[RMDB]
RNA sequence: GGGAACGACUCGAGUAGAGUCGAAAAGAUAUGGAUCCCUCGAUGAGAUACGGGAUCGAAGUACUCGGAAACGAGUACGUAGUCGUAUCGAGAGGAAUCCUAAGUCAAACGAGUGUUCGCACUCGAAGAGAAUAUCGAAGUUCGCUUCGAUAUUCUCAAAAGAAACAACAACAACAAC
Reactivity to DMS in 0.01 (KOAc 150mM, MgCl2 10mM, bicine 150mM(pH8.5), 24C), signal-to-noise 8, nucleotides 027 to 126: g010a030u000a300u010g010g010a000u000c010c000c000u000c010g010a150u010g000a220g010a020u000a000c020g000g020g010a080u010c040g000a050a300g000u000a000c000u010c000g000g000a110a090a180c000g000a020g010u000a000c000g000u000a130g010u000c000g000u000a000u010c000g000a140g000a020g010g000a020a010u000c010c000u000a040a110g010u000c030a050a120a220c020g000a020g020u000g020u000u010c250g020c020a030c000u000c000g010a090a080
Reactivity to 2A3 in 0.01 (KOAc 150mM, MgCl2 10mM, bicine 150mM(pH8.5), 24C), signal-to-noise 7, nucleotides 027 to 126: g010a020u070a020u150g000g010a010u000c030c090c000u000c020g290a300u210g100a070g010a150u020a020c010g050g070g110a130u130c020g010a060a010g010u000a000c000u000c000g000g010a040a080a040c000g010a010g000u000a000c000g000u010a000g010u000c010g010u010a010u020c040g000a060g000a010g010g010a030a020u000c000c010u010a100a040g060u030c050a060a050a080c020g000a000g010u020g040u120u120c270g080c090a000c000u000c010g010a120a020
An RNA of 177 nucleotides, treated with DMS and 2A3 and read out base by base.
The DMS profile rests on 12,148 reads.
Values cover nucleotides 27 to 126.